[RMDB]
RNA sequence: GGGAACGACUCGAGUAGAGUCGAAAAAACUGCUUGUGUCCGUGCUCGCAGCGUAGAGUCAUCAUCACGGAACCGCUGAGACGUGGCCGUCUGCCCAUCCUCGGUUAAAUCUAGCAGACUGGUUUCCGGGUGCGCUUUGCCUGUCGUGCUGCCCGGCGGAAUAACAUAACUUCGGUUAUGUUAUUCCAAAAGAAACAACAACAACAAC
Reactivity to DMS in 0.01 (KOAc 150mM, MgCl2 10mM, bicine 150mM(pH8.5), 24C), signal-to-noise 2, nucleotides 027 to 156: a060a020c020u000g010c010u000u010g000u000g020u000c010c000g000u000g020c030u000c200g010c030a030g020c020g020u010a130g010a190g000u010c090a160u000c140a080u000c010a040c010g000g000a030a030c060c030g000c030u000g010a080g000a030c090g010u000g010g000c030c060g000u000c030u020g010c010c020c030a040u000c020c010u000c010g020g000u000u000a100a040a080u010c140u010a100g010c000a060g010a040c010u000g050g010u000u000u000c010c000g030g010g010u010g010c100g010c020u000u010u000g010c020c000u010g000u000c040g010u000g000c010u000g010c000c020c010g000g000c300
Reactivity to 2A3 in 0.01 (KOAc 150mM, MgCl2 10mM, bicine 150mM(pH8.5), 24C), signal-to-noise 8, nucleotides 027 to 156: a000a010c010u010g000c000u010u010g000u000g010u000c000c000g010u010g000c000u000c010g010c010a040g010c040g150u210a050g030a080g230u100c070a110u060c020a030u110c000a070c010g000g000a010a010c000c010g000c020u010g000a000g000a030c040g020u020g000g000c030c020g000u000c000u010g000c000c000c010a010u020c000c010u000c000g010g010u020u020a010a030a050u170c190u170a030g000c000a000g010a020c010u050g140g020u050u100u030c010c000g000g000g000u040g010c020g000c020u130u160u150g070c030c050u160g070u190c040g010u020g000c030u090g020c000c000c000g010g000c020
An RNA of 207 nucleotides, treated with DMS and 2A3 and read out base by base. The reactions ran in a buffer of 150 mM KOAc, 10 mM MgCl2 and 150 mM bicine (pH 8.5), at 24 C. Source: RMDB library RSTRND, as collected in RNAgym. DMS (dimethyl sulfate) methylates the pairing face of unpaired adenines and cytosines. 2A3 adducts were read by reverse transcription with SuperScript II with manganese.